[RMDB]
Structure probing data (2A3) for a 207-nucleotide construct. The data come from the RNA Mapping Database (RMDB), library RSTRND. The RNA was probed in 150 mM KOAc, 10 mM MgCl2 and 150 mM bicine (pH 8.5) at 24 C.
RNA sequence: GGGAACGACUCGAGUAGAGUCGAAAAUGCAGUAGUUUGGCAGACUAUAAUGCUACUAGGCGUUUCAAUAAACGGAACAAAAAAACAAGAAAAUGACUAUCAAGAUUUAAUGAUUAGUCAAAAUCUAAACCAAAAUCUAGCUUUUGCUAGCGUUUAGGACAAUGAUACGCUUCGGCGUAUCAUUGUCAAAAGAAACAACAACAACAAC
Reactivity to 2A3 in 0.01 (KOAc 150mM, MgCl2 10mM, bicine 150mM(pH8.5), 24C), signal-to-noise 1, nucleotides 027 to 156: u000g000c000a000g010u130a000g000u040u050u000g010g000c070a020g040a010c010u010a000u100a280a000u070g000c010u070a130c030u030a020g140g000c030g000u020u060u050c150a130a130u160a220a070a000c020g020g040a050a030c090a000a140a080a010a050a000a000c090a120a000g000a040a110a000a030u010g010a000c000u000a000u030c000a020a080g070a290u060u190u300a070a030u070g040a030u030u300a000g020u000c000a010a010a010a010u000c000u070a030a030a030c010c010a070a040a030a030u030c000u020a000g000c030u040u130u180u240g010c000u000a020g040c010g020u010u010u010a050g010